[RMDB]
RNA sequence: GGGAACGACUCGAGUAGAGUCGAAAAGGAGAUGAGCAAGUCCGAGAUUGUCAUGCGACUGCUGUCGGCGGAGGCCAAAAUCAAGCUCUCCGACAUGCGUUCGGGCCGGAUGAGCGAUGACGACUGGAAACUGACGGGUGUUCGCACCCGUCAGUUUAAAAGAAACAACAACAACAAC
Reactivity to DMS in 0.01 (KOAc 150mM, MgCl2 10mM, bicine 150mM(pH8.5), 24C), signal-to-noise 1, nucleotides 027 to 126: g000g010a110g000a120u040g020a290g000c090a170a300g000u000c000c000g070a140g000a060u000u000g020u000c040a080u020g000c070g000a020c050u010g050c030u000g000u000c070g000g000c270g050g010a000g030g060c020c130a010a070a090a050u080c220a240a180g000c000u010c020u000c000c000g010a060c000a050u050g030c010g000u010u000c050g050g000g000c110c060g000g020a060u000g000a230g010c000g010a120u010g040a060c050g000a100c020u030g000g000
Reactivity to 2A3 in 0.01 (KOAc 150mM, MgCl2 10mM, bicine 150mM(pH8.5), 24C), signal-to-noise 2, nucleotides 027 to 126: g120g020a080g000a020u090g020a070g020c050a050a000g050u000c020c000g040a050g040a150u170u130g000u120c020a000u200g120c080g030a010c030u230g000c080u000g020u000c000g000g040c120g060g030a040g030g100c010c000a160a220a040a120u270c120a000a010g010c010u000c020u020c010c000g020a020c040a030u300g000c000g090u120u150c010g010g030g030c020c000g000g000a030u040g000a070g000c070g000a060u030g090a020c090g010a010c040u060g010g170
The record gives the reactivity of an RNA of 177 nucleotides to DMS and 2A3. Reactivities are given for positions 27 through 126. For DMS the reverse transcriptase was MarathonRT.